[RMDB]
RNA sequence: GGGAACGACUCGAGUAGAGUCGAAAAAAAAUGCUGAUGGCUCUUCUUUCUGAUAAUGCCUAUCUCAAAUGGGCGCGUGUUGAAGGUAAGGACGGAUUUGUCAGUGUAGAGCUACAACCUCCUUGCAAACCACCAUGCUUCGGCAUGGUGAAAAGAAACAACAACAACAAC
Reactivity to DMS in 0.01 (KOAc 150mM, MgCl2 10mM, bicine 150mM(pH8.5), 24C), signal-to-noise 2, nucleotides 027 to 129: a030a160a140a170u030g000c030u010g030a110u000g050g000c030u000c030u030u000c020u000u010u040c040u000g020a000u020a060a080u000g120c020c030u030a050u040c000u020c250a030a030a040u030g030g010g040c000g000c000g000u040g000u010u030g000a000a000g000g000u040a050a020g000g020a000c060g010g020a130u000u000u000g020u030c100a030g040u000g020u090a000g000a010g030c010u020a050c040a000a040c020c050u000c020c010u080u000g020c060a080a070a070c120
Reactivity to 2A3 in 0.01 (KOAc 150mM, MgCl2 10mM, bicine 150mM(pH8.5), 24C), signal-to-noise 3, nucleotides 027 to 129: a000a010a000a030u140g040c050u040g000a090u030g070g000c020u010c000u000u000c010u030u090u020c030u000g060a080u060a180a050u170g000c000c000u030a020u010c080u020c120a100a120a080u120g000g000g000c060g000c000g030u070g000u030u050g050a070a050g050g040u040a010a060g010g010a010c170g000g010a010u000u030u120g020u000c030a010g000u010g070u020a050g020a020g080c010u010a010c000a000a020c000c000u000c010c000u000u040g000c080a100a020a020c050
The data come from the RNA Mapping Database (RMDB), library 15KLIB. Structure probing data (DMS and 2A3) for a 170-nucleotide construct. The RNA was probed in 150 mM KOAc, 10 mM MgCl2 and 150 mM bicine (pH 8.5) at 24 C. Reactivities are given for positions 27 through 129.